Background:
The record gives the reactivity of an RNA of 207 nucleotides to 2A3. The RNA was probed in 150 mM KOAc, 10 mM MgCl2 and 150 mM bicine (pH 8.5) at 24 C. Values cover nucleotides 27 to 156. The data come from the RNA Mapping Database (RMDB), library VIROID. For 2A3, 2,127 sequencing reads were counted.
RNA sequence: GGGAACGACUCGAGUAGAGUCGAAAAAGGGCCGCGGUGCUCUGGAGUAGAGGCUCUGCCUUCGAAACACCAUCGAUCGUCCCUUCUUCUUUACCUUCUUCUGGCUCUUCGUGGAGACGCGACCGGUGGCACCCCUGCUCGGUUCGCUCCAACCUGCGUUACGAAAGAGGUUCGCCUCUUUCGUAACAAAAGAAACAACAACAACAAC
Reactivity to 2A3 in 0.01 (KOAc 150mM, MgCl2 10mM, bicine 150mM(pH8.5), 24C), signal-to-noise 3, nucleotides 027 to 156: a000g000g000g000c020c010g030c020g030g010u000g010c010u000c000u020g000g010a010g000u000a010g000a010g030g000c030u080c260u300g050c050c000u200u260c000g000a020a000a000c020a040c120c010a000u010c000g090a300u010c010g000u000c010c040c000u020u020c010u010u000c000u020u050u100a040c000c030u030u050c010u030u040c040u090g050g000c020u030c020u170u150c070g080u040g020g040a040g040a130c030g040c060g060a070c010c030g040g010u060g050g000c060a140c000c030c020c010u010g000c020u030c060g010g000u050u070c010g000c010u000c010c010a030a050c010c040u070g030c020